Chemical mapping of a 177-nucleotide RNA with DMS and 2A3. For DMS, 2,616 sequencing reads were counted. The reactions ran in a buffer of 150 mM KOAc, 10 mM MgCl2 and 150 mM bicine (pH 8.5), at 24 C.
RNA sequence: GGGAACGACUCGAGUAGAGUCGAAAAGAUAUGGACAAUGAUGGUGAACUACCGUCGGCCAUCGGAAACGAUGGAAGACGGCACUUGAGUCCUAAGUCAAACAUACCCCUGUUCGCAGGGGUAUGAACACAUAAACCCGGUUCGCCGGGUUUAUGUGAAAAGAAACAACAACAACAAC
Reactivity to DMS in 0.01 (KOAc 150mM, MgCl2 10mM, bicine 150mM(pH8.5), 24C), signal-to-noise 3, nucleotides 027 to 126: g000a050u000a300u000g000g000a020c010a120a120u000g010a130u010g000g010u000g020a050a040c070u020a300c000c000g010u000c000g000g010c000c000a000u000c000g020g000a110a040a170c000g010a010u000g000g000a010a020g000a010c000g000g010c000a020c000u000u000g000a100g000u000c000c000u000a050a160g000u000c010a110a110a300c020a000u000a010c010c000c000c000u010g000u000u030c270g010c010a010g000g000g000g010u000a000u000g000a060a210
Reactivity to 2A3 in 0.01 (KOAc 150mM, MgCl2 10mM, bicine 150mM(pH8.5), 24C), signal-to-noise 2, nucleotides 027 to 126: g000a010u110a000u120g000g010a000c030a100a300u220g070a080u150g030g030u010g030a060a040c050u170a090c300c010g020u000c000g010g010c000c000a010u000c010g020g000a040a130a000c010g000a000u000g000g000a010a000g000a020c020g010g000c000a000c000u000u020g020a000g000u020c000c010u030a150a010g050u020c060a110a050a080c000a000u000a000c000c000c000c000u000g080u080u060c300g020c080a000g040g010g000g000u000a000u000g000a000a000